[RMDB]
RNA sequence: GGGAACGACUCGAGUAGAGUCGAAAACUAACUAUGCAACUGCUAAUUCUCUUCCCCUGUAGCACAUCUAAAUUCCUAUUUGUCUCUCAGGGCCCAGUUCGCAUAGCCUUUCUUUACCCUCCCAGUCUAUGCUCCAAAUGAAGAGAGAGAACCAUAAGUAUUUAAUAGUGUUCGCACUAUUAAAUACAAAAGAAACAACAACAACAAC
Reactivity to DMS in 0.01 (KOAc 150mM, MgCl2 10mM, bicine 150mM(pH8.5), 24C), signal-to-noise 2, nucleotides 027 to 156: c030u000a090a090c020u010a030u010g000c010a060a040c030u010g010c100u000a130a130u000u000c040u000c060u000u000c040c000c000c030u000g020u000a020g030c300a050c040a060u010c060u010a050a100a150u010u010c110c080u000a110u000u010u000g030u000c020u000c070u010c020a100g020g040g020c060c100c040a050g030u000u000c150g000c030a060u000a050g030c050c070u010u000u000c040u000u000u000a110c040c010c010u010c020c000c010a180g010u000c040u000a050u010g010c030u000c020c030a040a050a070u010g010a070a070g000a070g000a080g030a130g020a050a090c040c050a070u010a060a280
Reactivity to 2A3 in 0.01 (KOAc 150mM, MgCl2 10mM, bicine 150mM(pH8.5), 24C), signal-to-noise 4, nucleotides 027 to 156: c030u050a070a000c010u020a030u060g010c010a010a010c020u030g060c030u200a170a200u250u010c070u010c000u050u070c020c000c000c000u020g040u080a010g000c080a000c000a030u020c020u090a090a170a170u220u070c030c010u040a060u040u020u030g020u000c020u000c000u000c040a020g010g000g000c030c030c000a010g010u030u020c010g000c000a000u000a000g010c000c010u160u200u080c080u140u180u300a190c010c000c020u000c020c030c010a010g020u000c020u050a040u090g030c000u030c040c000a020a080a090u080g020a070a020g030a000g010a000g010a000g010a040a020c030c020a070u060a300a030